RNA sequence: GGGAACGACUCGAGUAGAGUCGAAAAGGGACUGGCCCGAUGAAGCCCGGCAACCUAACUUUAUUUAAGCGUAAAGUGAAGGUGCUAAUUCCAGCAAAUUGGUGUAUUCCGUUUUGGUAGAUAAGAGAAGCGUGACAUGAGUUCGCUCAUGUCACAACGAUCACGUAAUGUUCGCAUUACGUGAUCGAAAAGAAACAACAACAACAAC
Reactivity to DMS in 0.01 (KOAc 150mM, MgCl2 10mM, bicine 150mM(pH8.5), 24C), signal-to-noise 2, nucleotides 027 to 156: g000g010g020a120c030u010g000g040c000c030c030g020a110u000g000a170a110g000c010c000c090g000g000c010a020a100c000c000u020a170a020c000u000u000u000a010u020u000u000a160a170g000c300g040u000a000a040a010g030u000g000a090a060g030g050u000g010c030u000a060a130u000u000c020c020a090g000c110a020a130a110u000u000g000g010u000g000u000a130u000u010c020c050g020u000u000u000u000g020g040u010a120g000a110u000a070a110g000a140g010a120a100g000c110g020u000g030a000c020a010u000g000a060g020u000u000c300g050c000u000c000a010u000g010u020c000a010c000a020a110
Reactivity to 2A3 in 0.01 (KOAc 150mM, MgCl2 10mM, bicine 150mM(pH8.5), 24C), signal-to-noise 4, nucleotides 027 to 156: g010g000g000a010c030u010g010g020c000c000c040g010a040u090g030a030a030g030c020c000c000g000g010c040a150a140c000c000u010a000a010c000u070u020u020a030u100u160u140a210a070g110c070g020u020a000a000a020g000u040g090a100a010g010g000u000g000c000u010a040a060u160u030c000c010a010g000c110a100a060a060u050u110g000g010u090g030u110a080u090u120c030c050g060u110u050u080u050g040g000u030a110g050a140u120a180a070g060a010g060a130a040g100c080g080u000g000a000c000a000u010g000a010g030u070u150c240g010c050u000c000a000u010g000u000c000a000c000a000a000